The data come from the RNA Mapping Database (RMDB), library TTRINS. This 177-nucleotide RNA was probed chemically with DMS. Conditions: 150 mM KOAc, 10 mM MgCl2 and 150 mM bicine (pH 8.5), 24 C. For DMS, 1,292 sequencing reads were counted.
[RMDB]
RNA sequence: GGGAACGACUCGAGUAGAGUCGAAAAGAUAUGGAGCUACAGAGACUUAAGGGAUAGCCUGCGGUAAGAUCGGAAACGAUCUUACCGCAGGCACAUCCCGAUGAGUCGACGAAGUAGCUCCUAAGUCGACAUCAUGUAAGUUCGCUUACAUGAUGUCAAAAGAAACAACAACAACAAC
Reactivity to DMS in 0.01 (KOAc 150mM, MgCl2 10mM, bicine 150mM(pH8.5), 24C), signal-to-noise 1, nucleotides 027 to 126: g000a130u030a300u000g000g000a020g040c010u000a010c000a190g010a180g010a000c000u010u010a090a300g000g000g000a010u000a130g010c000c000u040g030c000g000g000u020a020a020g000a000u000c030g000g040a100a060a260c020g010a000u000c020u030u000a000c020c000g000c000a040g020g070c000a000c100a020u000c000c000c000g000a010u050g000a000g000u010c000g010a150c210g010a080a140g000u000a020g040c000u010c000c000u000a020a110g010u000c060